[RMDB]
RNA sequence: GGGAACGACUCGAGUAGAGUCGAAAAGCGUACUACAGCCGAAGUAGAGCGAUGAAAUAUGGUCUCUAGCGUGGAUUCUCCCAAAUAGGAGAAUCUCGGGCCAUAUGGAGCUCUAUUUUUGGCUGUAUCGCAAAAACCGAAUCUUCGGAUUCGGUAACCAUACAUCUCGAUUCGUCGAGAUGUAUGGAAAAGAAACAACAACAACAAC
Reactivity to DMS in 0.01 (KOAc 150mM, MgCl2 10mM, bicine 150mM(pH8.5), 24C), signal-to-noise 1, nucleotides 027 to 156: g000c020g050u000a020c050u000a010c030a000g000c000c020g020a020a030g010u000a010g010a010g040c000g000a080u000g030a080a130a020u000a010u000g000g010u020c000u000c070u000a150g040c170g000u000g030g030a000u000u000c000u010c010c000c000a030a140a160u010a050g020g000a010g000a010a010u000c000u000c030g020g020g000c010c000a010u000a000u010g000g020a160g010c000u030c020u000a010u000u000u000u000u000g060g030c060u020g010u020a000u000c020g000c010a070a040a030a090a110c000c010g000a030a010u000c000u000u010c300g070g010a010u000u010c000g000g020u000a000a040
Reactivity to 2A3 in 0.01 (KOAc 150mM, MgCl2 10mM, bicine 150mM(pH8.5), 24C), signal-to-noise 4, nucleotides 027 to 156: g000c000g030u100a070c060u010a010c020a000g000c010c000g010a010a000g000u000a000g010a000g000c010g270a300u040g010a020a000a010u020a000u000g010g010u030c080u050c150u270a100g100c060g130u220g040g000a000u000u010c010u040c000c010c020a150a260a120u300a100g000g000a000g000a010a000u000c010u010c010g000g000g000c000c000a000u010a000u010g000g000a000g010c010u030c010u000a000u040u150u000u040u080g000g000c000u000g000u010a000u000c010g000c000a030a030a010a060a030c000c000g000a000a000u000c010u030u100c290g140g000a020u000u000c000g000g000u010a020a000